Chemical mapping of a 177-nucleotide RNA with DMS and 2A3. Reactivities are given for positions 27 through 126. The RNA was probed in 150 mM KOAc, 10 mM MgCl2 and 150 mM bicine (pH 8.5) at 24 C.
RNA sequence: GGGAACGACUCGAGUAGAGUCGAAAAAGAGCGUUUUGGGGGAUACGCACAGUGACCAUUCAAGCUGAUUGUGACACUGUGUAGGGUAGGUACUGAUUGGUUCUUCAAUCAGUAGAUGGGAAGAAAAGCUUAGUGGAAUGUUCGCAUUCCACUAAGCAAAAGAAACAACAACAACAAC
Reactivity to DMS in 0.01 (KOAc 150mM, MgCl2 10mM, bicine 150mM(pH8.5), 24C), signal-to-noise 2, nucleotides 027 to 126: a110g000a110g020c090g010u010u000u000u000g000g040g020g000g010a110u020a070c250g000c000a000c030a000g030u000g030a110c000c000a020u000u000c000a150a190g050c220u020g000a010u000u000g020u020g030a130c000a010c000u000g020u000g040u000a130g000g000g000u000a030g000g000u000a000c000u000g010a000u000u000g000g010u000u010c110u020u000c000a010a010u000c000a000g010u000a000g000a110u010g000g000g000a080a090g000a050a040a070a090
Reactivity to 2A3 in 0.01 (KOAc 150mM, MgCl2 10mM, bicine 150mM(pH8.5), 24C), signal-to-noise 2, nucleotides 027 to 126: a010g090a020g010c090g040u070u090u140u200g040g000g010g020g100a050u090a180c110g000c000a000c000a000g000u010g020a090c010c010a010u000u020c060a100a200g150c150u090g100a050u040u040g060u150g010a000c010a000c000u000g010u030g010u020a000g000g000g010u060a050g080g020u000a000c010u010g000a010u000u000g050g070u060u000c020u090u060c020a000a000u000c000a000g000u010a010g020a110u040g000g020g000a050a030g030a050a110a000a010